An RNA of 177 nucleotides, treated with 2A3 and DMS and read out base by base. DMS (dimethyl sulfate) methylates the pairing face of unpaired adenines and cytosines. High 2A3 reactivity points to a flexible backbone, as in loops and unpaired stretches. The data come from the RNA Mapping Database (RMDB), library OK2TRN.

RNA sequence: GGGAACGACUCGAGUAGAGUCGAAAAUGUAAGAAUUAUGUCUGUAAUGGUAACAAACUCUGUCUCCAAUUGUUACAACAAUAUACCUCUGCCUGUGUUAAUAUUGAACGUGCGCUCCAGCAGAGCGACUCUUACAUCGCUUCGGCGAUGUAAGAGUAAAAGAAACAACAACAACAAC
Reactivity to 2A3 in 0.01 (KOAc 150mM, MgCl2 10mM, bicine 150mM(pH8.5), 24C), signal-to-noise 1, nucleotides 027 to 126: u230g030u090a060a030g030a140a080u100u040a100u210g110u000c110u090g080u140a020a110u110g100g000u020a050a020c030a030a110a030c050u010c050u130g070u020c020u000c040c030a040a100u010u040g030u050u040a030c010a080a030c010a050a000u080a010u080a190c030c020u070c020u040g000c000c000u020g000u000g040u060u050a070a060u110a130u170u050g060a070a020c020g010u040g030c000g000c030u010c010c000a000g020c030a000g010a000g020c020g020
Reactivity to DMS in 0.01 (KOAc 150mM, MgCl2 10mM, bicine 150mM(pH8.5), 24C), signal-to-noise 2, nucleotides 027 to 126: u000g010u010a040a070g000a070a090u000u000a070u010g000u000c040u000g020u000a040a110u000g000g010u000a070a040c040a030a050a120c110u010c060u010g010u000c010u030c010c050a040a070u000u010g000u000u000a040c080a060a090c090a040a060u010a040u000a140c070c020u000c010u030g020c010c030u010g010u000g010u020u000a080a110u010a090u010u000g000a060a030c120g000u010g010c040g010c000u000c040c090a120g020c140a110g000a010g040c090g000